[RMDB]
Structure probing data (DMS and 2A3) for a 170-nucleotide construct.
DMS adducts were read by reverse transcription with MarathonRT.
The 2A3 profile rests on 47,519 reads.
The data come from the RNA Mapping Database (RMDB), library 15KLIB.
RNA sequence: GGGAACGACUCGAGUAGAGUCGAAAAACGAUUUCCCCAUGACGCUGGAGACAUCCUGGAAGGGGAAAGAGGAGGGUGGAAGAAAAAGGGGUGGGCCCCCCCGAUCCGAGGGGCCCGACUGCCAAGUAUAGGUUACAGUUCGCUGUAACCAAAAGAAACAACAACAACAAC
Reactivity to DMS in 0.01 (KOAc 150mM, MgCl2 10mM, bicine 150mM(pH8.5), 24C), signal-to-noise 9, nucleotides 027 to 129: a110c160g030a100u040u010u000c000c010c020c090a100u060g010a100c100g000c080u000g020g000a060g000a110c250a100u010c040c030u000g020g020a100a050g030g010g030g030a030a030a040g000a100g030g020a100g010g020g050u030g000g010a050a030g000a000a040a040a080a100g040g020g020g070u000g020g020g040c000c000c010c010c010c010c030g020a090u000c130c120g010a040g000g000g000g000c000c020c000g000a000c050u020g000c040c070a080a090g000u070a090u020a100
Reactivity to 2A3 in 0.01 (KOAc 150mM, MgCl2 10mM, bicine 150mM(pH8.5), 24C), signal-to-noise 9, nucleotides 027 to 129: a000c100g030a060u030u010u030c020c000c000c000a120u160g040a040c070g030c110u050g010g000a020g000a040c030a090u050c010c010u040g030g030a030a030g020g010g000g030a000a040a010g050a030g020g020a030g010g010g010u060g020g020a040a030g020a040a050a010a010a020g010g010g000g010u110g010g000g000c000c000c000c000c000c000c000g020a050u060c040c030g010a070g000g000g000g000c010c000c000g000a020c010u060g030c010c020a060a020g080u050a140u120a220